[RMDB]
RNA sequence: GGGAACGACUCGAGUAGAGUCGAAAACCAACUUAAUAACCAUGUAAAAUUAGCAAGUGAGUAACAUUUGCUAGUAGAGUUAGUUUCCUUGGACUCAGUGCUAUGUAUUUUUCUUAAUUAUCAUUACCUGUAUGUCAUCGUUCGCGAUGACAUACAGAAAAGAAACAACAACAACAAC
Reactivity to 2A3 in 0.01 (KOAc 150mM, MgCl2 10mM, bicine 150mM(pH8.5), 24C), signal-to-noise 2, nucleotides 027 to 126: c010c000a000a030c010u060u110a120a050u070a190a040c040c010a050u070g060u180a030a140a090a040u040u020a000g010c000a000a010g010u000g030a020g150u200a160a090c000a010u000u000u040g000c000u020a030g000u020a000g010a000g020u020u090a010g000u010u020u080c030c000u020u040g080g020a040c010u010c030a000g040u000g110c010u080a040u130g040u030a120u060u070u010u060u000c040u010u120a170a170u060u070a100u140c050a070u060u120a050c010
Reactivity to DMS in 0.01 (KOAc 150mM, MgCl2 10mM, bicine 150mM(pH8.5), 24C), signal-to-noise 2, nucleotides 027 to 126: c010c000a190a110c200u000u050a070a060u000a070a110c140c070a030u020g030u030a050a060a090a050u000u000a000g000c000a020a030g060u010g000a300g040u000a070a100c010a010u000u000u010g010c000u000a010g020u000a040g000a060g020u000u000a020g020u000u000u000c000c010u000u000g000g010a060c010u010c090a020g000u000g000c040u000a040u000g000u020a010u000u000u010u000u040c040u000u000a070a110u000u000a060u000c050a080u030u000a160c200